An RNA of 177 nucleotides, treated with DMS and 2A3 and read out base by base. The DMS profile rests on 27,189 reads. For 2A3, 39,395 sequencing reads were counted. The reactions ran in a buffer of 150 mM KOAc, 10 mM MgCl2 and 150 mM bicine (pH 8.5), at 24 C.
RNA sequence: GGGAACGACUCGAGUAGAGUCGAAAAGUGGAUAGUUUCGACUAUCCACACAACUGAUGAUCUUACAGUGGAGGAUGAAGAAGUUGGCCAUCGGAUCCUCAAAUAGCACAGAGUUCGCUCUGUGCAAAUCUCAACUAAUAUUCGUAUUAGUUGAGAUAAAAGAAACAACAACAACAAC
Reactivity to DMS in 0.01 (KOAc 150mM, MgCl2 10mM, bicine 150mM(pH8.5), 24C), signal-to-noise 9, nucleotides 027 to 126: g030u000g000g000a010u000a010g000u000u000u010c180g020a120c000u000a000u000c000c000a000c000a040c120a070a060c030u000g000a140u010g010a080u000c030u000u000a120c070a080g020u000g010g010a050g000g010a040u000g010a130a120g000a080a070g010u000u000g010g010c050c040a070u000c050g000g000a080u000c010c010u000c090a060a070a090u010a110g010c000a010c000a010g000a010g020u000u010c230g010c010u000c000u000g010u000g010c000a010a030
Reactivity to 2A3 in 0.01 (KOAc 150mM, MgCl2 10mM, bicine 150mM(pH8.5), 24C), signal-to-noise 9, nucleotides 027 to 126: g000u000g000g000a000u010a010g000u020u040u110c170g020a010c010u000a000u010c000c000a000c000a000c000a000a010c010u070g020a060u050g010a040u090c030u050u170a080c040a090g050u110g140g070a030g050g030a060u090g060a050a130g020a050a030g060u130u120g090g010c030c010a030u030c020g030g030a020u010c010c010u020c020a060a070a090u160a020g000c000a000c000a000g010a000g010u040u060c150g050c070u000c000u000g000u000g000c000a000a000

2A3 adducts were read by reverse transcription with SuperScript II with manganese.